The record gives the reactivity of an RNA of 207 nucleotides to DMS and 2A3.
RNA sequence: GGGAACGACUCGAGUAGAGUCGAAAACGCAAAGCGGCAGCGCGGCGCUCUGGAGGCCUUGCCCCGCGCACUGCUCUUUACAUGGCCCGACGUGAGGGCACUUCGCGGGCAGUGCUGCGGCCUCGUGAAACUGCCCCUAAGUUCGCUUAGGGGCAAAACCUAUAAUGAGGUUCGCCUCAUUAUAGGUAAAAGAAACAACAACAACAAC
Reactivity to DMS in 0.01 (KOAc 150mM, MgCl2 10mM, bicine 150mM(pH8.5), 24C), signal-to-noise 2, nucleotides 027 to 156: c030g020c020a040a070a090g020c030g030g060c100a120g000c040g050c030g010g030c050g010c040u000c010u010g010g020a120g000g030c030c040u010u010g010c070c020c000c030g020c060g040c000a040c020u000g030c000u000c020u000u010u000a090c060a100u000g010g000c000c010c000g010a260c140g020u000g020a230g000g010g010c000a020c020u010u010c030g030c300g020g030g000c020a050g020u000g000c000u010g030c020g030g010c020c020u000c040g000u000g010a070a070a100c080u010g030c010c000c000c000u010a010a050g000u000u010c300g010c010u000u000a020g010g010g060g080c010a000a000a030
Reactivity to 2A3 in 0.01 (KOAc 150mM, MgCl2 10mM, bicine 150mM(pH8.5), 24C), signal-to-noise 2, nucleotides 027 to 156: c070g030c040a110a090a040g020c010g080g000c050a070g120c030g020c050g060g020c030g010c020u020c010u070g140g010a000g000g010c000c000u000u110g050c060c000c010c010g030c000g000c000a000c010u000g000c000u000c020u070u120u120a070c070a100u100g080g020c000c010c030g040a040c060g120u160g070a110g000g000g050c030a090c040u060u090c040g010c010g020g000g000c000a000g010u010g000c030u070g000c010g000g000c000c000u010c010g000u030g000a090a010a020c060u030g000c000c000c000c000u000a000a010g000u020u060c100g060c120u000u000a010g000g010g010g000c010a000a000a000